[RMDB]
RNA sequence: GGGAACGACUCGAGUAGAGUCGAAAAUAACAGUGUCCUGGCGUGAAAACGUCAGGCAAUUAGCAAUCACUGUAUGCUAAUUGCAUUGUGUGAAAACACAAUGAUGCUGUUUAACAGUGAUUGAUACGAACUAGUGGUAUUUCGAUAUCACUAGUUCAAAAGAAACAACAACAACAAC
Reactivity to 2A3 in 0.01 (KOAc 150mM, MgCl2 10mM, bicine 150mM(pH8.5), 24C), signal-to-noise 9, nucleotides 027 to 126: u080a000a000c000a000g000u000g010u010c000c000u000g000g000c000g000u020g060a060a030a020a010c000g000u000c000a000g000g000c000a000a000u000u000a000g000c000a010a030u060c000a000c000u000g000u020a050u030g000c000u000a000a000u000u000g000c000a000u000u000g000u000g010u010g070a040a010a030a000c000a000c000a000a000u010g000a000u000g000c000u000g000u000u000u040a020a000c000a000g020u000g010a040u050u160g040a030u040a060c090
Reactivity to DMS in 0.01 (KOAc 150mM, MgCl2 10mM, bicine 150mM(pH8.5), 24C), signal-to-noise 8, nucleotides 027 to 126: u030a010a010c010a000g010u000g010u000c000c000u010g000g000c010g010u000g010a130a060a130a010c000g010u000c000a000g000g000c000a000a000u000u000a010g000c000a060a120u000c010a000c000u000g010u000a150u000g000c000u000a000a000u000u000g000c000a030u000u000g000u000g000u010g000a150a080a130a020c010a000c000a000a000u000g000a010u000g010c000u000g010u000u000u010a080a020c010a010g010u000g000a220u030u030g010a120u030a090c230
The data come from the RNA Mapping Database (RMDB), library OK1LIB. An RNA of 177 nucleotides, treated with 2A3 and DMS and read out base by base. The 2A3 profile rests on 63,801 reads. The RNA was probed in 150 mM KOAc, 10 mM MgCl2 and 150 mM bicine (pH 8.5) at 24 C.